[RMDB]
RNA sequence: GGGAACGACUCGAGUAGAGUCGAAAAUAAAACACGUUACGUGAGCACAGUCGGUAGUGCAGCAGGACCGAAACCUGCAGCGAAAGGGAUCAAGACCCUGUUCGCGCAAAAACCGAAGAAAAAAAAACAUUUCACUUAUGUUCGCAUAAGUGAAAUGAAAAGAAACAACAACAACAAC
Reactivity to 2A3 in 0.01 (KOAc 150mM, MgCl2 10mM, bicine 150mM(pH8.5), 24C), signal-to-noise 3, nucleotides 027 to 126: u090a010a040a030a010c030a010c030g130u250u300a060c110g010u070g060a010g010c020a010c000a020g050u010c020g020g000u010a000g010u030g010c020a020g000c000a010g010g030a110c050c070g050a060a010a020c000c000u000g010c000a020g000c000g000a000a010a020g030g010g010a030u190c110a130a050g170a150c000c000c000u030g190u030u020c000g000c000g000c040a000a040a050a020a030c020c040g000a040a020g060a010a010a000a000a000a000a000a000a000
Reactivity to DMS in 0.01 (KOAc 150mM, MgCl2 10mM, bicine 150mM(pH8.5), 24C), signal-to-noise 3, nucleotides 027 to 126: u020a060a040a060a140c010a020c020g010u000u020a070c080g030u000g010a210g000c000a020c030a020g020u000c000g000g020u020a040g000u000g000c000a100g000c000a000g010g000a080c060c090g020a100a060a050c010c010u000g020c000a240g010c020g010a010a070a010g000g010g000a070u010c300a130a160g000a120c010c000c010u010g000u000u000c010g020c000g010c140a050a010a010a050a010c000c000g010a020a180g030a030a000a010a000a020a020a040a050a120